The data come from the RNA Mapping Database (RMDB), library OK2TRN. Chemical mapping of a 177-nucleotide RNA with DMS. For DMS the reverse transcriptase was MarathonRT. The RNA was probed in 150 mM KOAc, 10 mM MgCl2 and 150 mM bicine (pH 8.5) at 24 C. The DMS profile rests on 1,064 reads.

RNA sequence: GGGAACGACUCGAGUAGAGUCGAAAAGGCGUAAAGGGCUCGUAGGCGGUUUGUCGCGUCGGGAGUGAAAACUUGAGGCUUAACCUCAUUCGUGCUUCCGAUACGGGCAGACUUGAGGCAGGCAGGGCGUCAGGGACGAGUUCGCUCGUCCCUGACGAAAAGAAACAACAACAACAAC
Reactivity to DMS in 0.01 (KOAc 150mM, MgCl2 10mM, bicine 150mM(pH8.5), 24C), signal-to-noise 1, nucleotides 027 to 126: g020g000c060g020u040a070a040a100g000g040g020c070u000c060g030u000a070g010g030c070g000g000u000u000u020g020u000c000g010c000g020u000c000g020g000g000a000g000u020g010a100a080a090a130c060u010u010g000a060g040g000c120u000u040a140a270c050c000u000c000a040u000u000c130g000u050g000c000u000u000c020c000g010a060u000a030c030g000g000g010c000a020g000a000c050u000u000g020a070g010g000c040a060g000g010c060a080g020g000g000